RNA sequence: GGGAACGACUCGAGUAGAGUCGAAAACACCGGGCAAUCGAGUGCGCUGGUGCCCGUACCUCCGCUGACACUAAUGGAGUAACUUCCGACACGAGUAUAACAUUGCGCGGAGCAAAUGAGCUGUGGGCCAUCCAGGUGGUUUCGACCACCUGGAUGGAAAAGAAACAACAACAACAAC
Reactivity to DMS in 0.01 (KOAc 150mM, MgCl2 10mM, bicine 150mM(pH8.5), 24C), signal-to-noise 1, nucleotides 027 to 126: c100a040c040c000g000g000g010c030a120a130u010c160g020a080g000u000g030c020g100c030u010g010g010u000g030c020c030c060g130u000a080c220c030u010c020c010g000c000u010g100a080c130a140c100u010a100a010u000g000g050a080g050u000a080a030c130u080u000c050c000g040a300c200a080c270g010a050g000u000a090u030a030a110c080a190u010u000g000c060g000c000g020g000a070g010c000a080a050a040u020g000a120g000c000u000g010u000g010g000g000
Reactivity to 2A3 in 0.01 (KOAc 150mM, MgCl2 10mM, bicine 150mM(pH8.5), 24C), signal-to-noise 2, nucleotides 027 to 126: c020a000c000c000g000g030g000c060a020a090u230c200g120a170g300u130g060c200g130c160u060g000g060u020g000c010c000c030g030u100a120c010c000u000c000c000g000c030u050g120a070c020a010c130u130a030a090u120g010g000a040g010u050a050a030c030u050u040c020c030g090a000c040a050c100g130a010g030u000a100u000a230a110c050a090u000u090g020c000g000c060g050g000a010g000c010a050a080a130u150g060a030g030c060u040g020u150g090g080g000